[RMDB]
RNA sequence: GGGAACGACUCGAGUAGAGUCGAAAAAGCGCCUUUAGAGUAAGCGACAGUGAGCAUUUUGGCUAUUAUAGAAGCUAUACCACACCGUUUAAGACCCAACGGUGUGGUAUUAGCUAUCUGUAGCUAGUAGCUAAGUCGCUCACUCUCUAAGGGCGCACGUUCCAUCACUGUUCGCAGUGAUGGAACGAAAAGAAACAACAACAACAAC
Reactivity to 2A3 in 0.01 (KOAc 150mM, MgCl2 10mM, bicine 150mM(pH8.5), 24C), signal-to-noise 1, nucleotides 027 to 156: a000g000c010g000c000c010u000u000u010a020g000a020g010u110a130a000g100c030g050a000c000a090g190u200g070a030g070c160a120u110u090u160u140g000g030c030u030a080u190u110a180u080a080g040a030a000g000c000u000a000u000a000c000c000a000c000a000c000c000g000u000u000u050a230a050g200a190c020c070c070a000a000c010g000g000u000g000u000g000g000u000a000u000u000a000g000c000u000a010u050c000u040g000u000a030g030c000u000a040g040u010a010g020c000u040a080a000g010u000c000g010c000u010c000a010c000u050c000u000c000u000a000a010g010g000g010c000g010c000a010